This 207-nucleotide RNA was probed chemically with 2A3. Source: RMDB library OK3TST, as collected in RNAgym. 2A3 adducts were read by reverse transcription with SuperScript II with manganese. Reactivities are rounded to 0.1 and cut off at 0 and 3. The reactions ran in a buffer of 150 mM KOAc, 10 mM MgCl2 and 150 mM bicine (pH 8.5), at 24 C.
[RMDB]
RNA sequence: GGGAACGACUCGAGUAGAGUCGAAAAAGGUCUGGGCCGUGUCCAACGCCGGCGACGCCGCUUCGAUCGUCCUUCGGUUCCUUCGGAACAUGGCGCAUAUGGCGCUCGGGAACCCGGACGGCCUCGAGGACGUCGUCCUCCCGGAGCUGGACGCCGACCUAUUUGACCGUUUCGACGGUCAAAUAGGAAAAGAAACAACAACAACAAC
Reactivity to 2A3 in 0.01 (KOAc 150mM, MgCl2 10mM, bicine 150mM(pH8.5), 24C), signal-to-noise 3, nucleotides 027 to 156: a000g120g010u070c070u120g050g080g000c080c040g080u040g000u050c000c000a010a000c030g010c010c000g000g020c020g000a000c010g010c020c000g000c010u000u000c010g030a070u060c010g000u010c010c000u120u250c070g010g010u000u000c010c000u100u160c100g120g050a220a110c100a260u200g010g000c010g040c030a050u150a140u300g300g000c000g000c020u050c030g020g000g000a010a010c000c000c000g010g010a010c000g000g000c010c030u000c000g020a040g010g010a260c000g000u000c010g000u010c000c010u110c000c000c010g000g000a020g010c000u020g000g000a000c020g000c000c010g050a070